[RMDB]
RNA sequence: GGGAACGACUCGAGUAGAGUCGAAAAUAAUGCGUGGAACAACUAAGUUUGGCAGCGGGAAAAUUACUGUCGCAACCAGUGGGUAUGCAGCGAACUACUAUAAUGCAAACAGACAUCGCUUAAAUGAAUUUUACAUUACCUUCGGGUAAUGUAAAAUAAAAGAAACAACAACAACAAC
Reactivity to 2A3 in 0.01 (KOAc 150mM, MgCl2 10mM, bicine 150mM(pH8.5), 24C), signal-to-noise 4, nucleotides 027 to 126: u200a020a030u100g030c020g030u040g070g020a070a030c010a010a010c060u180a160a080g040u030u060u100g020g010c010a010g000c020g000g030g040a030a110a000a050u130u060a090c030u040g060u090c040g000c050a030a060c040c010a040g040u060g020g020g000u070a050u110g010c020a010g000c000g010a020a010c010u060a010c020u050a070u050a260a080u150g030c030a050a100a000c010a030g050a030c020a040u040c050g000c050u060u100a050a130a050u150g090a010
Reactivity to DMS in 0.01 (KOAc 150mM, MgCl2 10mM, bicine 150mM(pH8.5), 24C), signal-to-noise 6, nucleotides 027 to 126: u010a090a070u010g010c030g020u010g010g010a120a070c070a060a110c090u010a100a100g010u000u010u000g000g020c050a060g030c090g020g010g000a070a060a080a090u010u010a060c060u010g010u000c060g010c100a050a080c090c070a080g010u000g000g010g020u010a060u000g010c060a030g010c040g000a050a050c070u000a060c100u010a050u000a070a070u020g020c070a050a050a090c100a050g010a060c080a060u000c080g020c060u000u000a030a050a110u010g000a100